The data come from the RNA Mapping Database (RMDB), library M2RFPK. The record gives the reactivity of an RNA of 207 nucleotides to 2A3. Values are in units of 0.01, from 0 to 300, in steps of 10. The RNA was probed in 150 mM KOAc, 10 mM MgCl2 and 150 mM bicine (pH 8.5) at 24 C.
RNA sequence: GGGAACGACUCGAGUAGAGUCGAAAACCUGCAGCCAUGACCUACCAGGCUGCGGUGCGGCUCGCCGCACAGGUCAUCCCUCAUCGGGCGCGUCCUGCGUCCUUCCACGCCAACCCACAAGGGAUCUAAAACACGUUGGGCUUCGGCCCAACGUGAACGGUUUUACAAAGUUCGCUUUGUAAAACCGAAAAGAAACAACAACAACAAC
Reactivity to 2A3 in 0.01 (KOAc 150mM, MgCl2 10mM, bicine 150mM(pH8.5), 24C), signal-to-noise 2, nucleotides 027 to 156: c010c000u030g000c020a040g010c020c030a150u080g030a100c000c070u100a160c100c080a050g000g000c010u000g020c030g000g000u000g010c000g000g000c040u120c220g170c020c000g020c000a000c000a020g050g010u010c010a040u060c030c000c010u060c040a180u090c040g010g000g000c000g000c020g040u270c060c120u220g000c010g070u030c030c010u090u020c000c010a060c000g020c000c050a050a070c010c000c030a020c050a150a090g020g030g000a000u050c040u280a050a090a000a020c000a000c000g010u000u000g000g030g020c000u010u080c160g090g000c000c000c020a000a000c010g000u000g000a000a020